[RMDB]
RNA sequence: GGGAACGACUCGAGUAGAGUCGAAAAUCAUUUGUCAUCUCACUUUACCUGAUGUGCUGCUUGUAAUCUCAACACUCGAGGUGCUAUACAUGCUCACGGAAAUGGGAGAUGUUGCUUGCACAAAAAUUGCAAAAGUAGAAAAGAGCAUAGGUAAGACCACGUCCUUUAACUUCGGUUAAAGGACGUGAAAAGAAACAACAACAACAAC
Reactivity to DMS in 0.01 (KOAc 150mM, MgCl2 10mM, bicine 150mM(pH8.5), 24C), signal-to-noise 2, nucleotides 027 to 156: u010c060a160u000u000u000g020u000c050a110u010c020u000c040a100c050u000u010u000a060c020c020u000g020a150u000g040u000g030c030u000g030c050u000u000g050u000a090a150u010c180u020c040a060a030c030a020c040u000c020g010a160g120g050u000g020c010u000a220u000a030c030a020u000g000c030u010c020a100c000g010g010a050a020a040u000g000g000g000a090g020a130u010g010u010u000g010c010u000u000g010c050a150c040a040a040a050a020a090u000u020g040c000a040a020a030a080g030u000a090g000a050a100a090a060g000a100g010c000a060u000a060g040g030u000a020a050g020a260c160
Reactivity to 2A3 in 0.01 (KOAc 150mM, MgCl2 10mM, bicine 150mM(pH8.5), 24C), signal-to-noise 7, nucleotides 027 to 156: u070c040a050u080u100u170g100u070c040a090u040c040u040c030a060c070u070u060u090a080c000c010u080g110a110u050g050u030g020c040u010g000c010u030u010g030u050a090a100u010c010u000c030a090a200c070a110c150u090c080g020a040g000g040u010g010c020u070a040u030a120c020a030u090g140c000u000c030a060c040g110g090a090a160a160u190g040g030g010a010g000a010u020g020u020u010g010c060u050u090g030c020a000c030a020a070a040a090a130u040u020g000c020a020a080a110a000g050u060a020g060a070a100a040a030g080a020g000c010a010u030a040g010g030u040a050a030g040a020c020
The record gives the reactivity of an RNA of 207 nucleotides to DMS and 2A3. The DMS profile rests on 3,557 reads. The reactions ran in a buffer of 150 mM KOAc, 10 mM MgCl2 and 150 mM bicine (pH 8.5), at 24 C. The 2A3 profile rests on 4,448 reads.